[RMDB]
RNA sequence: GGGAACGACUCGAGUAGAGUCGAAAAGCUUCGCAUGCUUCCGUUGAGUAACAACACUACGUACGGCUGGUGCAUGAGAGAGCUACGCCGUGCUUUGUCCUUUGGCAUACAUCUCUACGAUUGGGACCCUAGCGUACUCGUUCGCGAGUACGCUAGGAAAAGAAACAACAACAACAAC
Reactivity to 2A3 in 0.01 (KOAc 150mM, MgCl2 10mM, bicine 150mM(pH8.5), 24C), signal-to-noise 2, nucleotides 027 to 126: g010c000u100u090c030g000c030a010u030g010c010u140u000c020c010g030u050u130g020a100g100u160a080a050c150a060a010c010a020c070u140a050c050g090u010a000c010g000g010c050u020g000g100u040g000c030a070u090g020a030g000a000g010a010g140c000u000a040c050g000c000c000g010u010g070c000u250u120u070g000u030c010c000u090u050u110g050g000c020a000u070a050c040a060u110c010u000c020u000a040c070g100a110u110u110g050g010g020a030c010
Reactivity to DMS in 0.01 (KOAc 150mM, MgCl2 10mM, bicine 150mM(pH8.5), 24C), signal-to-noise 1, nucleotides 027 to 126: g020c000u020u000c120g000c040a080u010g000c010u000u000c010c020g050u000u000g000a120g010u000a060a080c140a180a060c170a170c150u000a050c130g050u010a030c020g000g010c280u000g000g040u000g010c080a060u010g000a110g020a070g000a160g040c030u000a020c160g010c060c000g030u000g000c040u030u000u000g010u010c010c040u010u010u000g010g000c090a040u010a040c090a020u000c020u000c030u010a100c090g000a120u000u000g000g000g000a130c090
Chemical mapping of a 177-nucleotide RNA with 2A3 and DMS. The reactions ran in a buffer of 150 mM KOAc, 10 mM MgCl2 and 150 mM bicine (pH 8.5), at 24 C. 2A3 adducts were read by reverse transcription with SuperScript II with manganese.